[RMDB]
RNA sequence: GGGAACGACUCGAGUAGAGUCGAAAAUUUUGCAUGGAAAUAGAAAUAUAAUAAAUGUCCUGCAGGUGAUGGGGGCUGUAGCAAUUUUAUUGAAGAUUCAAGUUUGAUUGACCUUUGUUAGGGUGAUCAACCUCCUAUUUUUCGAAAUAGGAGGUUGAAAAGAAACAACAACAACAAC
Reactivity to 2A3 in 0.01 (KOAc 150mM, MgCl2 10mM, bicine 150mM(pH8.5), 24C), signal-to-noise 3, nucleotides 027 to 126: u070u070u080u080g050c010a060u160g030g040a020a070a040u060a050g060a040a210a010u150a100u070a090a150u140a060a080a010u080g050u050c000c000u040g060c040a000g070g070u130g050a120u090g000g030g000g000g000c010u020g080u080a020g010c040a050a010u010u000u090u100a080u010u150g050a080a060g100a100u010u140c100a110a020g040u090u050u050g080a090u010u070g050a050c010c000u050u030u020g030u060u060a060g010g030g010u020g050a030u000
Reactivity to DMS in 0.01 (KOAc 150mM, MgCl2 10mM, bicine 150mM(pH8.5), 24C), signal-to-noise 2, nucleotides 027 to 126: u000u010u000u010g000c000a050u020g010g020a060a040a070u010a070g000a080a120a180u030a110u020a030a100u030a030a060a100u010g010u020c150c000u010g030c020a040g000g000u010g020a060u000g000g010g050g030g000c040u020g010u000a040g010c060a040a040u010u010u010u000a040u030u000g000a050a100g010a140u020u010c030a010a090g000u000u020u010g000a040u000u010g010a050c010c010u030u030u000g010u020u010a110g010g020g010u010g010a090u020